[RMDB]
RNA sequence: GGGAACGACUCGAGUAGAGUCGAAAAAUGACUUGAAAUCACGCUUACCAGAGUAUAUGAUUCCUAGAAAGUUUGAAUGGAUGGAACAAUUGCCAUUGACUUCAAAUGGUAAAAUUGACAGAAAGAAGAAGGAAUUGAUGUUCGCAUCAAUUCCUUCAAAAGAAACAACAACAACAAC
Reactivity to 2A3 in 0.01 (KOAc 150mM, MgCl2 10mM, bicine 150mM(pH8.5), 24C), signal-to-noise 3, nucleotides 027 to 126: a000u240g010a100c050u040u080g050a030a030a030u250c060a010c070g010c030u040u070a140c050c000a020g030a000g150u040a060u020a020u220g120a230u000u070c010c000u080a080g180a000a150a070g040u180u160u130g110a130a060u150g040g120a030u020g010g100a120a030c040a110a150u110u070g020c000c000a000u010u050g020a080c060u050u040c220a010a000a000u000g000g010u020a000a000a030a190u130u070g060a060c100a060g110a100a090a000g100a100a000
Reactivity to DMS in 0.01 (KOAc 150mM, MgCl2 10mM, bicine 150mM(pH8.5), 24C), signal-to-noise 3, nucleotides 027 to 126: a050u010g000a010c030u000u030g010a110a040a150u010c040a100c140g040c030u000u020a060c070c120a170g000a070g020u010a060u040a120u010g010a130u000u020c010c030u010a050g020a050a060a040g020u030u010u030g000a050a070u000g000g000a080u010g000g010a050a110c040a060a070u020u010g030c000c000a000u000u010g020a160c160u030u020c170a050a000a010u000g010g020u000a070a010a050a030u000u000g000a120c100a110g020a100a100a050g060a060a080